The data come from the RNA Mapping Database (RMDB), library OK2TRN. The record gives the reactivity of an RNA of 177 nucleotides to DMS and 2A3. The DMS profile rests on 7,907 reads.
RNA sequence: GGGAACGACUCGAGUAGAGUCGAAAACUAUGUUGGCCAGACUGGUCUUGAACUCCUCACCUCAAGUGAUCUGCCCACCUCAGCCUUGCAAAGUGCUGGGAUUACAGGUGUGAACCACUGUGCCCGGACCAAGAUCCUAUUUCGAUAGGAUCUUGGUAAAAGAAACAACAACAACAAC
Reactivity to DMS in 0.01 (KOAc 150mM, MgCl2 10mM, bicine 150mM(pH8.5), 24C), signal-to-noise 5, nucleotides 027 to 126: c050u020a050u010g020u000u000g000g020c030c040a080g010a110c130u000g000g000u000c030u020u010g000a080a090c090u000c040c020u000c050a090c100c030u010c060a070a070g020u010g000a070u000c030u010g010c050c020c060a070c080c010u000c020a040g010c010c010u000u000g020c180a070a050a050g020u010g010c010u000g000g010g000a070u000u010a060c090a040g010g010u000g020u000g010a100a100c060c020a030c020u000g010u000g010c000c010c040g000g000
Reactivity to 2A3 in 0.01 (KOAc 150mM, MgCl2 10mM, bicine 150mM(pH8.5), 24C), signal-to-noise 3, nucleotides 027 to 126: c030u050a080u300g080u060u110g050g020c010c010a050g050a130c130u070g010g040u000c010u050u070g060a040a030c020u020c030c010u010c030a050c010c010u050c030a020a080g020u020g060a100u030c010u060g010c010c020c020a030c020c010u030c020a010g000c020c000u020u160g120c090a200a080a010g050u120g060c000u000g020g030g010a020u020u110a050c040a030g000g000u030g020u040g050a020a030c030c000a020c040u030g030u030g010c000c030c000g030g030